[RMDB]
RNA sequence: GGGAACGACUCGAGUAGAGUCGAAAAAGAAAGAGCGUAGCACACACUCAGACUAAGUCUGACACACACCUACGCUAUACAUCUUAGUGUGUGAUCGAGAUAUCGAUGUGUGUGUAAGAUGAAAAAAACUAAAAGGUUUCUUCGGAAACCUUUUAGUAAAAGAAACAACAACAACAAC
Reactivity to DMS in 0.01 (KOAc 150mM, MgCl2 10mM, bicine 150mM(pH8.5), 24C), signal-to-noise 2, nucleotides 027 to 126: a110g000a080a130a090g000a100g000c020g000u000a270g040c000a010c010a010c010a020c000u000c020a030g000a020c070u000a190a270g050u010c000u000g010a030c000a000c000a010c020a020c000c020u000a050c010g010c000u010a050u010a130c100a020u000c070u000u000a100g010u010g010u010g050u000g040a040u020c010g010a040g000a160u010a070u010c010g010a010u000g020u010g020u000g000u010g010u010a010a040g000a110u010g000a000a000a070a130a070a070